This 177-nucleotide RNA was probed chemically with DMS and 2A3. The data come from the RNA Mapping Database (RMDB), library OK2TRN. For 2A3 the reverse transcriptase was SuperScript II with manganese.

[RMDB]
RNA sequence: GGGAACGACUCGAGUAGAGUCGAAAAUGAGAGAAUCAGUAUGGGUGCUUCUUGGCCCUGAAACUUAUCAACUGUGCCUACCCGAGCGAGAUCGCAUAAAUGAUCCUUGAGAUAUUGAACCUGAAGGCUCGUGCCAAGUAUUCGUACUUGGCACGAGAAAAGAAACAACAACAACAAC
Reactivity to DMS in 0.01 (KOAc 150mM, MgCl2 10mM, bicine 150mM(pH8.5), 24C), signal-to-noise 1, nucleotides 027 to 126: u000g000a100g010a060g010a050a070u000c000a060g060u000a120u000g000g030g000u010g000c110u010u030c120u000u000g010g000c030c000c060u000g040a070a050a190c050u000u010a060u000c020a040a080c100u000g030u000g000c030c020u000a100c080c040c000g010a060g040c040g010a100g000a080u000c060g020c090a050u010a000a120a080u000g010a030u000c020c010u000u010g010a170g030a110u000a210u030u000g000a030a140c110c030u020g000a090a060g000g000
Reactivity to 2A3 in 0.01 (KOAc 150mM, MgCl2 10mM, bicine 150mM(pH8.5), 24C), signal-to-noise 1, nucleotides 027 to 126: u110g020a000g000a020g030a060a070u080c020a050g030u060a150u240g060g050g030u150g160c000u050u160c000u130u270g090g000c000c010c000u020g020a090a010a000c020u060u110a090u200c000a020a000c040u040g080u050g010c000c010u030a020c010c010c000g000a000g010c000g000a120g000a030u100c020g000c090a060u110a160a100a040u180g020a030u080c000c040u060u120g120a030g000a060u110a030u060u190g060a110a030c010c010u040g070a010a040g110g000